Record summary
An RNA of 177 nucleotides, treated with DMS and 2A3 and read out base by base. The RNA was probed in 150 mM KOAc, 10 mM MgCl2 and 150 mM bicine (pH 8.5) at 24 C. The DMS profile rests on 1,096 reads. Values are in units of 0.01, from 0 to 300, in steps of 10.
[RMDB]
RNA sequence: GGGAACGACUCGAGUAGAGUCGAAAAUCACUUUGCCAAUUGGACUUAUGUCUUUAUUGAUCAUUCAAGUGAGCAAAGGAAAUACGCUUUAAAAACUCAGGCAAACGGUGUUUGUCUUGUAUCCCGUGUAGCUCCCUUUUUUCGAAAAGGGAGCUACAAAAGAAACAACAACAACAAC
Reactivity to DMS in 0.01 (KOAc 150mM, MgCl2 10mM, bicine 150mM(pH8.5), 24C), signal-to-noise 1, nucleotides 027 to 126: u020c100a140c040u000u000u000g020c000c030a090a050u010u000g010g000a000c180u000u020a060u060g000u000c000u060u010u060a110u020u040g000a000u000c170a150u000u000c010a030a000g040u000g010a190g000c060a000a000a000g000g050a020a170a110u000a240c220g000c210u000u010u150a010a100a070a070a010c060u030c020a000g000g010c030a030a060a060c040g020g000u030g000u000u000u000g040u000c040u000u000g010u000a070u000c000c000c010g000u010
Reactivity to 2A3 in 0.01 (KOAc 150mM, MgCl2 10mM, bicine 150mM(pH8.5), 24C), signal-to-noise 4, nucleotides 027 to 126: u050c000a050c050u010u000u020g000c010c000a030a090u000u000g030g000a030c020u100u190a100u300g020u000c000u000u190u070a220u150u150g020a070u080c020a020u130u020c020a020a000g000u030g040a080g000c000a040a000a000g030g070a050a020a050u190a030c030g030c070u070u180u160a070a050a020a010a010c080u090c090a010g000g010c000a020a030a000c160g220g030u170g010u130u010u010g000u000c000u010u050g030u030a090u000c030c000c000g040u060